[RMDB]
RNA sequence: GGGAACGACUCGAGUAGAGUCGAAAAGAUAUGGAGACUUACUCGCUAUGAAGUAACAGCACUUCGGAAACGAAAACUGUUAUGGAGCGAAAGUCUCCUAAGUCAAACGUUCACUUCGGUGAACGAAGUCUACGCUUCAGUUCGCUGAAGCGUAGACAAAAGAAACAACAACAACAAC
Reactivity to DMS in 0.01 (KOAc 150mM, MgCl2 10mM, bicine 150mM(pH8.5), 24C), signal-to-noise 1, nucleotides 027 to 126: g010a030u000a300u000g010g000a010g010a010c010u000u000a120c190u020c000g000c000u010a300u010g010a130a250g010u000a000a010c000a040g000c110a040c200u000u000c010g000g010a060a030a100c010g000a040a090a100a100c000u000g020u000u000a010u000g000g000a000g010c010g000a010a040a010g000u000c000u000c000c000u030a000a080g000u010c050a040a070a190c010g010u000u000c000a000c040u000u000c170g040g000u000g000a000a000c010g000a010a040
Reactivity to 2A3 in 0.01 (KOAc 150mM, MgCl2 10mM, bicine 150mM(pH8.5), 24C), signal-to-noise 2, nucleotides 027 to 126: g010a020u040a000u110g010g020a000g010a040c010u050u100a210c040u060c010g010c000u180a300u300g030a090a030g030u020a000a000c000a000g000c080a050c140u090u150c040g040g000a010a010a000c000g000a010a050a060a030c000u000g010u000u000a020u030g000g050a020g040c000g000a030a000a000g000u000c000u000c000c010u000a020a000g000u000c010a070a020a060c020g010u000u000c020a000c000u040u060c220g160g030u000g000a000a000c010g040a050a000